Conditions: 150 mM KOAc, 10 mM MgCl2 and 150 mM bicine (pH 8.5), 24 C. Structure probing data (DMS and 2A3) for a 177-nucleotide construct. For 2A3 the reverse transcriptase was SuperScript II with manganese. For DMS, 8,286 sequencing reads were counted. For DMS the reverse transcriptase was MarathonRT.
[RMDB]
RNA sequence: GGGAACGACUCGAGUAGAGUCGAAAAAGGACAACACCGUCGGCACCGACGAGGCGCUGUUGGACAUCUACCGCAAGCUGCGUCCGGGCGAGCCCCCGACCAAAGAGUCAGCGCAGACGCUGUUGGAAUUUACUCGAAUUUUCGAAUUCGAGUAAAUAAAAGAAACAACAACAACAAC
Reactivity to DMS in 0.01 (KOAc 150mM, MgCl2 10mM, bicine 150mM(pH8.5), 24C), signal-to-noise 6, nucleotides 027 to 126: a090g020g020a150c020a020a040c030a040c110c010g020u000c020g010g010c040a080c060c030g010a040c070g010a130g010g000c030g010c090u000g000u000u000g020g000a110c120a110u000c090u010a110c050c040g000c060a130a080g010c040u000g000c050g010u000c030c100g010g000g010c030g000a110g000c090c030c010c040c030g010a080c060c060a060a090a090g010a160g000u000c010a060g020c040g010c040a050g000a040c030g020c100u000g000u000u000g000g000a120
Reactivity to 2A3 in 0.01 (KOAc 150mM, MgCl2 10mM, bicine 150mM(pH8.5), 24C), signal-to-noise 2, nucleotides 027 to 126: a000g050g010a020c000a010a020c000a040c040c030g010u010c000g000g050c020a040c090c070g020a030c040g030a120g030g000c030g010c060u030g060u050u110g020g000a040c040a170u000c050u150a140c010c010g040c060a060a000g010c030u030g000c030g040u040c060c000g030g030g010c070g040a050g080c000c000c020c020c040g040a060c010c020a140a150a030g080a030g030u040c010a010g040c040g000c040a030g010a060c040g000c020u020g020u010u010g030g010a040